[RMDB]
RNA sequence: GGGAACGACUCGAGUAGAGUCGAAAACGCUGGGCUUAAUCUCGCGCAAGGCCUCUGAAGCGCGCACGGAGGCUGAUGACCGGUGGAGAUGAGCCUGUGCUGAAGCGCGCACGGCAACCGAAAGGUGCGAAAACCCUACUAGUUCGCUAGUAGGGAACCCAAUGUAGACCUUCGGGUCUACAUUGGGAAAAGAAACAACAACAACAAC
Reactivity to 2A3 in 0.01 (KOAc 150mM, MgCl2 10mM, bicine 150mM(pH8.5), 24C), signal-to-noise 1, nucleotides 027 to 156: c000g000c010u030g040g000g000c020u020u030a220a090u130c000u000c010g190c040g000c190a260a280g050g000c010c000u010c010u000g060a240a070g030c000g000c000g020c000a040c020g000g000a000g000g000c010u070g110a220u270g050a040c050c150g020g090u130g080g030a010g000a010u020g020a000g000c000c000u020g000u000g010c000u010g030a120a050g000c000g000c000g000c000a010c020g000g000c000a000a000c000c000g000a090a000a010g000g000u000g000c000g040a040a100a120a170c000c000c000u010a000c000u010a010g050u050u080c210g000c140u000a010g000u010a010g020g000g000a010a020